[RMDB]
RNA sequence: GGGAACGACUCGAGUAGAGUCGAAAACUAAUCUUAUUUUUAACGUUUGAAAUUGAUAUUUCAAAUCAUACAAAAUAGGAUUAGUCUGCCCAUUUUCUAUAUACGUAAGCGCUAUUUCUGAAGAAUACCUAGUAUUACAGUUCGCUGUAAUACUAGGAAAAGAAACAACAACAACAAC
Reactivity to DMS in 0.01 (KOAc 150mM, MgCl2 10mM, bicine 150mM(pH8.5), 24C), signal-to-noise 3, nucleotides 027 to 126: c000u000a000a000u000c000u000u000a000u010u000u000u010u000a070a200c300g000u010u000u000g010a010a010a010u000u000g020a200u010a110u000u000u000c000a000a000a010u010c060a120u000a170c170a010a000a010a020u000a010g000g010a000u000u000a010g010u000c040u010g030c000c000c000a170u010u010u000u000c040u010a050u000a090u000a030c060g000u000a070a080g000c050g020c070u000a050u000u000u010c060u010g000a100a060g010a080a100u020a150
Reactivity to 2A3 in 0.01 (KOAc 150mM, MgCl2 10mM, bicine 150mM(pH8.5), 24C), signal-to-noise 4, nucleotides 027 to 126: c000u000a010a000u000c000u000u020a020u010u020u010u010u030a040a020c010g010u010u010u020g010a020a020a010u090u150g100a050u100a050u300u000u000c000a010a010a010u040c000a010u030a150c040a010a040a000a000u000a000g000g000a010u000u000a000g000u000c000u010g010c000c010c000a010u040u030u010u010c020u020a080u020a020u010a270c040g060u050a070a120g050c020g020c100u050a080u030u120u030c080u090g120a110a040g050a130a040u090a120
Chemical mapping of a 177-nucleotide RNA with DMS and 2A3. For DMS, 2,925 sequencing reads were counted. Conditions: 150 mM KOAc, 10 mM MgCl2 and 150 mM bicine (pH 8.5), 24 C. Source: RMDB library RFMREP, as collected in RNAgym.